Notes:
Conditions: 150 mM KOAc, 10 mM MgCl2 and 150 mM bicine (pH 8.5), 24 C. The record gives the reactivity of an RNA of 207 nucleotides to 2A3 and DMS. For DMS, 1,035 sequencing reads were counted. High 2A3 reactivity points to a flexible backbone, as in loops and unpaired stretches.
[RMDB]
RNA sequence: GGGAACGACUCGAGUAGAGUCGAAAAUUAUAUUGCUUGUUUUCAAGAAACCUUCAGAUUUAGCAGGAGGCAAAAUAUGAAUUUGGAAAACAACAAAAGAACAAUUAAAGUAUAUAACUUAGUGUUCAAUUGUAAAUGACUAAAGCAUAAAGAACUACUAUACGAUAGUCUUCGGACUAUCGUAUAGAAAAGAAACAACAACAACAAC
Reactivity to 2A3 in 0.01 (KOAc 150mM, MgCl2 10mM, bicine 150mM(pH8.5), 24C), signal-to-noise 2, nucleotides 027 to 156: u170u030a140u060a080u160u070g020c030u030u010g030u100u060u000u050c010a000a040g060a080a130a070c000c000u060u060c000a100g020a300u130u190u170a070g000c140a060g020g000a020g010g030c020a010a000a000a170u210a110u130g050a150a100u140u140u060g020g020a030a040a020a050c060a010a000c000a010a100a080a080g030a010a000c000a010a010u080u170a250a080a000g000u000a090u010a010u060a300a010c000u010u030a000g000u010g010u010u000c030a020a090u000u050g050u020a140a110a040u020g020a000c000u050a050a020a010g040c010a000u090a160a260a010g080a010a010c000u140a010
Reactivity to DMS in 0.01 (KOAc 150mM, MgCl2 10mM, bicine 150mM(pH8.5), 24C), signal-to-noise 1, nucleotides 027 to 156: u000u020a170u000a110u000u000g020c040u000u000g050u000u000u000u000c000a190a190g020a290a170a000c000c060u000u000c010a160g020a130u000u000u000a050g070c060a240g000g020a000g030g000c020a030a020a080a250u020a020u000g000a110a200u000u000u010g030g000a050a100a150a100c000a120a020c000a000a000a030a300g000a070a070c000a030a070u000u030a110a040a190g020u000a190u000a100u000a190a080c020u000u000a220g020u020g000u020u000c030a050a300u020u000g000u000a070a100a100u000g000a290c070u030a030a050a050g050c000a050u000a120a220a110g000a100a150c020u000a050

For DMS the reverse transcriptase was MarathonRT. Reactivities are given for positions 27 through 156.